[RMDB]
RNA sequence: GGGAACGACUCGAGUAGAGUCGAAAAGAUAUGGAAUUUCCGAGGUGUGUCUCGAUAUGCAACACCUGUCACUCGGAAACGAGUGUCAGGUGGUAUCGAGACACACCGAUGAGGAAAUUCCUAAGUCCUCUCAAAAGAAGUUCGCUUCUUUUGAGAGAAAAGAAACAACAACAACAAC
Reactivity to 2A3 in 0.01 (KOAc 150mM, MgCl2 10mM, bicine 150mM(pH8.5), 24C), signal-to-noise 2, nucleotides 027 to 126: g010a040u160a100u260g020g000a030a030u000u000u030c000c030g020a060g050g000u030g000u000g000u000c000u010c010g020a010u010a040u120g240c290a300a080c010a110c030c000u000g000u020c010a000c000u000c010g030g070a090a140a080c020g020a000g010u000g030u020c000a000g010g000u000g010g000u010a000u000c010g000a010g010a000c000a010c000a000c000c000g000a000u020g010a010g000g000a000a000a020u010u020c000c000u010a030a010g020u040c000
Reactivity to DMS in 0.01 (KOAc 150mM, MgCl2 10mM, bicine 150mM(pH8.5), 24C), signal-to-noise 3, nucleotides 027 to 126: g000a100u010a300u020g010g010a040a010u000u000u000c000c010g020a140g000g020u000g040u000g000u000c000u000c000g010a030u000a000u000g030c230a170a300c000a000c000c000u010g010u000c000a000c000u000c000g020g000a150a090a190c010g040a010g020u000g020u000c000a000g000g000u000g020g030u000a000u000c000g000a020g000a010c000a000c000a010c010c000g010a030u000g010a300g010g000a010a010a010u000u000c000c000u000a040a140g000u000c030
Record summary: An RNA of 177 nucleotides, treated with 2A3 and DMS and read out base by base. Reactivities are given for positions 27 through 126. For 2A3, 4,789 sequencing reads were counted. The reactions ran in a buffer of 150 mM KOAc, 10 mM MgCl2 and 150 mM bicine (pH 8.5), at 24 C.